An RNA of 207 nucleotides, treated with 2A3 and DMS and read out base by base. The DMS profile rests on 2,716 reads. DMS adducts were read by reverse transcription with MarathonRT. Conditions: 150 mM KOAc, 10 mM MgCl2 and 150 mM bicine (pH 8.5), 24 C. 2A3 adducts were read by reverse transcription with SuperScript II with manganese.

[RMDB]
RNA sequence: GGGAACGACUCGAGUAGAGUCGAAAAUACCGUCUUCUCCCCGACGGUUUCAAUCCAUAGCUUCACGUCGUGUAGCGUAGGUGGAAGGUAUCGUGUGGUGUAUAAACACCACAUAGUCUCUUAGGGGUCAAGCUGAUAAACUUCGGUUUAUCAGCAAGAUGUACCCCUGGUUCGCCAGGGGUACAUCAAAAGAAACAACAACAACAAC
Reactivity to 2A3 in 0.01 (KOAc 150mM, MgCl2 10mM, bicine 150mM(pH8.5), 24C), signal-to-noise 5, nucleotides 027 to 156: u070a000c000c010g020u010c020u240u040c040u090c010c000c000c030g000a010c000g000g050u000u040u070c050a050a040u000c000c010a030u030a110g010c010u030u040c030a020c060g300u230c050g000u110g020u060a020g010c030g110u110a080g130g010u010g000g040a020a060g090g010u110a050u180c060g010u020g000u000g010g010u000g040u020a050u120a290a260a000c010a000c000c000a000c000a000u010a010g010u000c000u000c000u130u250a030g000g010g000g010u050c060a090a020g000c000u000g000a000u010a010a000a010c010u030u060c210g080g000u000u010u000a000u000c000a000g000c000a000a010
Reactivity to DMS in 0.01 (KOAc 150mM, MgCl2 10mM, bicine 150mM(pH8.5), 24C), signal-to-noise 1, nucleotides 027 to 156: u010a050c000c000g000u000c020u000u010c020u000c030c020c000c080g020a070c000g020g000u010u010u010c050a040a120u020c040c040a050u000a160g020c000u000u000c040a110c010g020u000c070g030u010g010u000a040g000c000g010u000a040g010g040u000g000g010a090a070g010g020u010a070u000c070g030u000g040u000g000g050u020g000u000a140u010a100a180a120c010a000c000c000a010c000a010u000a050g000u000c020u000c000u010u000a130g020g020g010g010u020c050a050a150g010c010u000g010a020u000a010a000a010c000u000u000c260g060g010u000u000u000a000u000c000a010g010c000a010a010